Chemical mapping of a 177-nucleotide RNA with 2A3 and DMS.
RNA sequence: GGGAACGACUCGAGUAGAGUCGAAAAUAUCACUGUGAUCUUAUUCUGAGGGGAGAAAAAACUAUCAUAGCUCUGAGGCAAGACUUCGACUUUAUAGUGCUAUCAGUUCCCCGAUACAGGGUCAGAGGCCCAUAUCCUGUUUCGACAGGAUAUGGGCAAAAGAAACAACAACAACAAC
Reactivity to 2A3 in 0.01 (KOAc 150mM, MgCl2 10mM, bicine 150mM(pH8.5), 24C), signal-to-noise 3, nucleotides 027 to 126: u260a060u090c070a000c090u060g040u070g120a070u020c000u000u040a030u100u020c030u030g050a090g000g020g060g010a010g120a000a150a000a010a000a000c050u070a040u070c040a020u030a110g000c040u040c080u130g000a020g020g000c070a280a080g040a210c020u030u050c050g030a050c000u000u050u030a090u030a040g060u070g030c080u050a050u140c000a010g060u080u070c010c000c000c030g000a000u030a050c020a020g030g000g010u010c010a000g000a010g030
Reactivity to DMS in 0.01 (KOAc 150mM, MgCl2 10mM, bicine 150mM(pH8.5), 24C), signal-to-noise 3, nucleotides 027 to 126: u040a030u030c110a300c050u000g020u000g000a040u020c010u000u000a090u010u010c130u030g020a270g000g070g010g030a040g030a000a040a080a110a090a030c010u000a000u010c220a020u000a030g000c170u030c050u030g060a030g000g000c040a120a110g010a300c030u010u000c110g000a000c010u000u010u000a030u000a030g000u000g000c090u000a100u020c120a130g010u040u000c000c040c000c040g000a100u030a080c150a070g000g000g010u000c000a020g000a060g000
Source: RMDB library OK1LIB, as collected in RNAgym.
For DMS, 2,989 sequencing reads were counted.